[RMDB]
RNA sequence: GGGAACGACUCGAGUAGAGUCGAAAAAGUGGACCGCUCUACGGAGCGGUCCACAAGCGGAGACACACGUUUCCGUUCACUCCUCACACCACACCCCGCCUGGACAGUUAUUGGUUCGGGCGGCUAAUUAGUGUACUUCAUUCGUGAAGUACACUAAAAAAGAAACAACAACAACAAC
Reactivity to 2A3 in 0.01 (KOAc 150mM, MgCl2 10mM, bicine 150mM(pH8.5), 24C), signal-to-noise 5, nucleotides 027 to 126: a000g000u000g000g000a000c000c000g190c000u000c020u030a120c300g040g000a000g000c030g020g000u000c000c000a000c000a000a000g000c000g050g020a000g000a020c060a010c010a010c300g000u000u010u010c000c000g000u040u040c020a050c040u040c010c000u060c000a100c010a030c050c040a070c010a020c040c010c000c000g000c010c000u010g000g010a010c000a050g060u200u130a170u300u300g090g000u020u000c000g010g000g000c000g000g010c000u010a030a060
Reactivity to DMS in 0.01 (KOAc 150mM, MgCl2 10mM, bicine 150mM(pH8.5), 24C), signal-to-noise 2, nucleotides 027 to 126: a140g050u000g100g050a080c000c050g010c000u000c000u010a080c180g020g000a060g030c000g000g050u020c010c060a000c000a020a040g010c010g010g010a040g030a020c000a260c190a200c120g000u000u000u000c010c010g000u000u030c090a130c170u020c010c000u010c070a060c080a110c060c110a020c150a080c180c190c000c000g000c000c000u000g000g010a000c010a090g000u000u030a130u030u060g000g000u010u000c000g010g000g010c010g000g000c040u000a000a110
Description: The record gives the reactivity of an RNA of 177 nucleotides to 2A3 and DMS. Reactivities are given for positions 27 through 126. For 2A3 the reverse transcriptase was SuperScript II with manganese. Source: RMDB libraries RFM100 and RFMREP, as collected in RNAgym. The reactions ran in a buffer of 150 mM KOAc, 10 mM MgCl2 and 150 mM bicine (pH 8.5), at 24 C.